[RMDB]
RNA sequence: GGGAACGACUCGAGUAGAGUCGAAAAAGGCGAUCUGUAGGGACAGCACCGUCAGCGAGAAGACGAUGCCGAUGGUGGUGAUCAUCGUGGCCGACACCACGAUCAGCACGCCUCGGGCGUCGCCUGGCUAUCUCGGGCAAUUCGUUGCCCGAGAUAGAAAAGAAACAACAACAACAAC
Reactivity to DMS in 0.01 (KOAc 150mM, MgCl2 10mM, bicine 150mM(pH8.5), 24C), signal-to-noise 3, nucleotides 027 to 126: a040g000g040c000g000a050u010c050u000g000u000a080g010g000g010a120c080a060g000c060a070c020c010g020u000c010a080g020c100g010a180g010a150a110g000a060c080g000a050u010g010c010c010g000a020u020g010g030u010g010g010u010g010a120u000c290a030u000c040g000u000g000g000c070c040g030a120c210a140c010c010a010c010g000a000u000c100a070g030c020a020c050g020c010c010u000c030g010g020g000c090g010u000c010g020c010c010u000g000g000
Reactivity to 2A3 in 0.01 (KOAc 150mM, MgCl2 10mM, bicine 150mM(pH8.5), 24C), signal-to-noise 2, nucleotides 027 to 126: a000g020g010c000g010a040u020c040u090g060u150a050g050g000g100a030c010a010g050c040a050c020c020g030u010c010a040g060c040g100a080g040a200a050g060a030c020g050a050u070g030c010c020g020a030u140g030g010u040g030g110u010g020a110u080c030a010u030c030g040u010g000g070c090c120g080a010c010a020c020c000a010c000g000a010u000c030a010g090c020a010c020g010c010c000u030c020g100g020g050c030g040u010c000g000c000c010u000g040g000

Conditions: 150 mM KOAc, 10 mM MgCl2 and 150 mM bicine (pH 8.5), 24 C. This 177-nucleotide RNA was probed chemically with DMS and 2A3. Source: RMDB library OK2TST, as collected in RNAgym. 2A3 adducts were read by reverse transcription with SuperScript II with manganese.